[RMDB]
An RNA of 207 nucleotides, treated with 2A3 and read out base by base.
RNA sequence: GGGAACGACUCGAGUAGAGUCGAAAAGCAAUGGUGAAGCCCAUGCAUAGAGAAAUCUGCUUCAUAAUUGAGCCUACAGCCUUAAGGACCACAAUAUUUGCAUCCAUCAUGUGUAUGGUCUACUGGGCUCCUUCUGCUCUCCAGCCACUGCACAAGAUAUACGCUAGUGCUUCGGCACUAGCGUAUAAAAAGAAACAACAACAACAAC
Reactivity to 2A3 in 0.01 (KOAc 150mM, MgCl2 10mM, bicine 150mM(pH8.5), 24C), signal-to-noise 1, nucleotides 027 to 156: g000c040a000a130u060g090g010u090g050a040a020g020c030c040c000a000u040g040c010a040u130a100g070a040g000a120a090a020u000c030u090g020c020u020u000c070a030u090a210a030u080u140g020a010g010c000c100u050a090c090a020g030c010c080u020u150a060a030g020g010a020c070c000a080c070a110a070u090a040u200u230u210g010c010a020u030c080c020a070u030c040a100u170g000u000g090u090a040u040g000g070u030c000u010a040c040u030g000g040g000c000u020c010c000u010u010c010u000g010c010u010c020u000c070c000a030g040c010c000a040c040u060g070c070a000c000a110a120g000a010
The RNA was probed in 150 mM KOAc, 10 mM MgCl2 and 150 mM bicine (pH 8.5) at 24 C.